This 177-nucleotide RNA was probed chemically with 2A3 and DMS. It was measured as part of the RMDB library TTRDEL. For 2A3, 6,392 sequencing reads were counted. Reactivities are given for positions 27 through 126.
RNA sequence: GGGAACGACUCGAGUAGAGUCGAAAAGAUAUGGACCGAACUACAGGUACCAUUGCGAAGAACUCGGAAACGAGGGAGCAAUGGCCAACCUGCGGUCCUAAGUCAAAGCCACCCUUCGGGGUGGCAAUCUUCAAUAGUUCUUCGGAACUAUUGAAGAAAAAGAAACAACAACAACAAC
Reactivity to 2A3 in 0.01 (KOAc 150mM, MgCl2 10mM, bicine 150mM(pH8.5), 24C), signal-to-noise 3, nucleotides 027 to 126: g020a020u060a050u150g010g010a010c000c020g020a050a050c100u170a050c300a010g010g000u010a020c010c010a000u010u000g000c030g170a300a030g020a140a090c000u010c010g010g060a050a070a050c010g010a010g000g000g030a040g020c000a000a010u010g020g040c070c010a080a040c000c010u020g000c010g000g000u000c010c000u030a070a010g010u000c020a060a060a040g010c000c000a000c000c010c000u000u080c300g060g000g020g020u000g000g000c000a000a040
Reactivity to DMS in 0.01 (KOAc 150mM, MgCl2 10mM, bicine 150mM(pH8.5), 24C), signal-to-noise 4, nucleotides 027 to 126: g000a070u010a300u020g000g000a020c000c000g000a080a070c080u010a300c010a010g000g010u010a110c000c000a000u000u000g000c010g000a130a100g020a090a180c010u000c000g010g000a090a080a190c010g000a030g000g000g000a090g000c000a010a000u000g000g000c070c060a050a020c000c010u000g000c010g000g000u010c000c000u000a010a060g000u000c050a090a140a120g010c000c010a000c000c000c000u000u020c180g030g040g000g040u000g000g000c000a000a000